[RMDB]
RNA sequence: GGGAACGACUCGAGUAGAGUCGAAAAAGGAGGCCAAACUUCGCCCACACCGCAAGGUCUACAACGGUGUGACCGACGAAUGGGAUCUCUGUCGAGAUUUGGAACCACCAGCCGAGUUGGCAGGCGCCGGGGGUACUUACUUCGGUAAGUACCCCCGAAAAGAAACAACAACAACAAC
Reactivity to 2A3 in 0.01 (KOAc 150mM, MgCl2 10mM, bicine 150mM(pH8.5), 24C), signal-to-noise 2, nucleotides 027 to 126: a010g070g010a010g020g000c000c000a070a010a030c040u030u030c000g040c000c040c000a010c020a010c000c020g090c200a230a090g140g100u060c050u150a090c040a280a140c090g040g000u050g000u040g010a000c000c060g050a110c010g090a080a060u140g010g040g010a060u040c030u010c020u060g190u200c180g030a050g000a150u040u060u120g060g000a060a070c000c000a000c020c010a020g050c010c000g080a080g050u050u050g050g000c050a020g000g000c000g000c000
Reactivity to DMS in 0.01 (KOAc 150mM, MgCl2 10mM, bicine 150mM(pH8.5), 24C), signal-to-noise 2, nucleotides 027 to 126: a000g030g010a070g000g050c030c000a020a020a160c000u010u010c030g060c130c000c030a010c030a010c010c030g040c170a180a040g000g020u010c130u020a010c050a130a170c030g000g000u000g020u010g010a080c140c030g010a020c030g020a050a120u030g000g010g020a030u010c010u000c030u000g030u020c050g010a090g000a000u000u000u020g000g000a040a120c060c000a100c100c060a220g010c050c070g000a100g000u010u010g000g000c090a050g070g000c070g000c120

Structure probing data (2A3 and DMS) for a 177-nucleotide construct. 2A3 adducts were read by reverse transcription with SuperScript II with manganese. Conditions: 150 mM KOAc, 10 mM MgCl2 and 150 mM bicine (pH 8.5), 24 C. For DMS the reverse transcriptase was MarathonRT. For DMS, 2,119 sequencing reads were counted. Reactivities are given for positions 27 through 126.